[RMDB]
RNA sequence: GGGAACGACUCGAGUAGAGUCGAAAAGAGGCAUGGAGUGAAGAGGGCGAUGGGACACUGGUGGGCAAUUUGGGAUAUGGGAAGGUGUUGGAGUCCCCAGCCGUUGCAUACUGUGAUCUGCAGGCUGCAAUAACAGUGGCUUCGGCCACUGUUAUUGAAAAGAAACAACAACAACAAC
Reactivity to DMS in 0.01 (KOAc 150mM, MgCl2 10mM, bicine 150mM(pH8.5), 24C), signal-to-noise 3, nucleotides 027 to 126: g010a120g010g010c070a070u000g000g020a130g020u000g030a130a080g010a100g030g000g000c090g010a120u030g010g020g000a060c060a090c090u000g020g000u010g000g000g000c120a050a090u000u000u000g020g010g010a130u020a070u000g000g000g000a070a050g010g000u000g010u000u010g010g000a110g000u000c020c010c010c030a030g010c010c020g010u010u000g010c010a030u000a050c080u000g000u010g010a110u000c080u000g010c000a150g000g010c030u000g000
Reactivity to 2A3 in 0.01 (KOAc 150mM, MgCl2 10mM, bicine 150mM(pH8.5), 24C), signal-to-noise 2, nucleotides 027 to 126: g070a020g060g020c100a050u100g040g050a100g050u160g070a110a080g040a120g030g050g000c060g070a070u070g030g040g030a020c040a030c090u090g000g030u070g020g000g000c030a040a070u150u060u040g030g020g050a070u080a120u270g070g020g010a080a100g080g020u090g090u080u060g030g010a050g020u020c000c000c000c000a010g000c000c010g090u130u070g000c010a010u030a110c020u120g070u090g270a210u020c010u090g000c000a000g030g000c000u010g000